Chemical mapping of a 207-nucleotide RNA with DMS. The DMS profile rests on 1,695 reads. For DMS the reverse transcriptase was MarathonRT. High DMS reactivity at an A or C suggests that its Watson-Crick edge is free. Conditions: 150 mM KOAc, 10 mM MgCl2 and 150 mM bicine (pH 8.5), 24 C.
RNA sequence: GGGAACGACUCGAGUAGAGUCGAAAAAGGGCCAGAUCCGGUACUCGCUCACCGUCGGGCUGGUGCUUUCCUCUGGUCAAACCAUCUCGCAUUCUAUCCCUAUUGAAGGUACCCCCCCAGUCCACCACGAGCCCAUACGGGGAGAUGAGAAGGACGAUAGAAUAUAUUACUUCGGUAAUAUAUUCUAAAAAGAAACAACAACAACAAC
Reactivity to DMS in 0.01 (KOAc 150mM, MgCl2 10mM, bicine 150mM(pH8.5), 24C), signal-to-noise 1, nucleotides 027 to 156: a040g040g030g030c010c000a080g010a100u010c030c100g000g050u000a040c000u010c250g040c010u000c030a080c040c230g010u010c150g040g000g030c000u010g050g030u030g000c040u010u020u000c020c040u010c020u000g010g000u020c030a050a060a130c040c010a120u020c040u000c080g010c010a100u010u000c040u010a150u000c010c030c030u020a220u000u000g000a070a080g030g000u000a170c000c000c030c000c040c010c000a130g020u000c010c000a150c060c010a060c040g000a210g000c030c010c030a230u000a110c130g000g000g070g000a120g000a030u000g000a100g020a150a070g020g000a040c010g000a300